[RMDB]
This 177-nucleotide RNA was probed chemically with DMS and 2A3. For DMS the reverse transcriptase was MarathonRT. For DMS, 2,120 sequencing reads were counted. 2A3 is a SHAPE reagent: it acylates the 2'-hydroxyl of flexible nucleotides of all four kinds.
RNA sequence: GGGAACGACUCGAGUAGAGUCGAAAAUAACGAUUAGAUGUCCGCACAACUCCGGACUCGCGGUGAGCGAUACAGCGCAGCGCGAGCAUCGCAGCUGCUGUGCGGACGGCUAGCAAGGGCUAGCCACCAGCUGGAGCAUAUUCGUAUGCUCCAGCUGAAAAGAAACAACAACAACAAC
Reactivity to DMS in 0.01 (KOAc 150mM, MgCl2 10mM, bicine 150mM(pH8.5), 24C), signal-to-noise 2, nucleotides 027 to 126: u030a070a150c190g010a130u050u060a100g010a110u020g050u000c000c000g000c000a030c000a000a080c000u000c260c010g000g010a220c020u000c000g020c010g000g000u000g010a020g010c030g010a100u060a130c300a130g010c000g020c030a040g000c000g000c000g020a000g000c080a040u000c000g010c130a120g040c180u000g000c030u000g010u000g000c000g010g020a000c000g000g000c000u000a000g000c000a150a170g000g000g010c000u000a000g000c000c000a030c180
Reactivity to 2A3 in 0.01 (KOAc 150mM, MgCl2 10mM, bicine 150mM(pH8.5), 24C), signal-to-noise 4, nucleotides 027 to 126: u150a080a020c070g040a090u060u170a070g130a270u280g000u020c000c010g030c010a010c000a080a150c030u100c130c010g040g030a050c030u010c000g000c000g090g140u030g030a050g000c020g090a140u080a300c120a170g000c020g000c000a030g010c010g000c000g010a000g050c060a120u060c020g000c040a050g000c020u270g000c050u000g010u020g000c000g000g000a000c000g000g000c000u000a000g000c020a120a190g150g160g080c010u000a000g000c010c010a000c030